An RNA of 207 nucleotides, treated with DMS and 2A3 and read out base by base. For 2A3 the reverse transcriptase was SuperScript II with manganese. DMS adducts were read by reverse transcription with MarathonRT. The 2A3 profile rests on 994 reads. Source: RMDB library OK3TST, as collected in RNAgym.
RNA sequence: GGGAACGACUCGAGUAGAGUCGAAAAAUGCAUAUUCCAUCCUCGCCUCUGUAACCCAGACCUUCCAUAACGAACUCGGGUACGGAAAACCCAGUCGUGAACUCGACUCCGUUGAAGAGUAGGGUUAGUUCCGGACGCGUACGCUUUGAGGCGAUAGUGUAAGAGCUGUUUUCGAACAGCUCUUACAAAAAGAAACAACAACAACAAC
Reactivity to DMS in 0.01 (KOAc 150mM, MgCl2 10mM, bicine 150mM(pH8.5), 24C), signal-to-noise 1, nucleotides 027 to 156: a110u000g000c050a140u020a250u000u000c020c000a200u010c040c050u000c020g010c020c000u000c000u000g030u010a060a040c020c030c010a200g000a040c000c000u000u010c020c070a170u010a070a150c020g000a080a050c010u010c100g060g010g020u000a110c060g000g000a080a030a070a090c020c010c010a200g020u000c020g010u000g000a070a030c030u000c000g020a000c010u000c000c010g000u000u010g010a160a020g000a020g010u000a070g010g030g000u000u000a080g020u000u000c030c020g010g020a110c000g000c060g030u010a100c040g030c040u010u000u010g020a070g010g010c010g000a010u000a030g020
Reactivity to 2A3 in 0.01 (KOAc 150mM, MgCl2 10mM, bicine 150mM(pH8.5), 24C), signal-to-noise 2, nucleotides 027 to 156: a000u110g020c020a080u050a110u200u090c010c010a070u090c050c010u020c000g030c000c000u010c010u060g010u080a040a040c000c010c020a060g090a060c010c030u000u030c010c030a120u060a160a060c060g020a120a050c030u050c110g000g000g010u040a040c050g080g050a030a010a060a090c040c010c020a010g000u040c000g020u030g120a050a020c000u000c000g020a000c020u040c020c070g090u030u090g090a050a000g020a030g070u080a060g040g000g000u000u020a020g020u040u050c020c010g040g000a030c010g040c000g100u050a040c090g030c050u140u070u080g000a000g000g020c000g000a000u020a000g120
The RNA was probed in 150 mM KOAc, 10 mM MgCl2 and 150 mM bicine (pH 8.5) at 24 C.